Annotation
Chemical mapping of a 177-nucleotide RNA with DMS and 2A3. DMS adducts were read by reverse transcription with MarathonRT. Reactivities are given for positions 27 through 126.

RNA sequence: GGGAACGACUCGAGUAGAGUCGAAAAAAAAAGAUAUGGACCGUGAACUACACGGAUAACUUCUUUGAUCUUAAUUCGGAAACGAAUUAAGGGAGAAGCUAAUACGUGCACGGUCCUAAGUCAAAAACAACAUUUAUUUCUUCGGAAAUAAAUGUUGAAAAGAAACAACAACAACAAC
Reactivity to DMS in 0.01 (KOAc 150mM, MgCl2 10mM, bicine 150mM(pH8.5), 24C), signal-to-noise 3, nucleotides 027 to 126: a060a040a040a140a060g000a040u010a300u000g000g000a030c010c010g020u000g000a080a030c050u020a300c000a000c010g000g000a060u000a060a060c010u000u000c000u000u000u010g000a080u010c010u000u000a010a000u000u010c000g010g000a080a040a120c000g030a010a010u000u000a010a010g000g000g000a010g000a020a010g010c010u000a110a070u030a070c000g000u000g000c000a000c010g010g000u000c000c010u000a000a040g010u010c020a070a060a060a070a140
Reactivity to 2A3 in 0.01 (KOAc 150mM, MgCl2 10mM, bicine 150mM(pH8.5), 24C), signal-to-noise 3, nucleotides 027 to 126: a000a010a000a030a050g070a040u090a030u060g000g020a000c000c000g000u020g000a010a030c070u150a040c300a000c000g000g010a010u010a020a020c010u030u000c000u290u300u050g100a120u040c000u030u010a010a000u000u000c000g010g040a060a050a090c000g010a000a000u010u010a010a000g000g000g020a070g000a000a000g000c010u060a100a030u230a260c010g000u010g010c010a010c020g020g000u010c000c010u000a000a000g010u010c020a020a050a050a000a060
It was measured as part of the RMDB library TTRDES.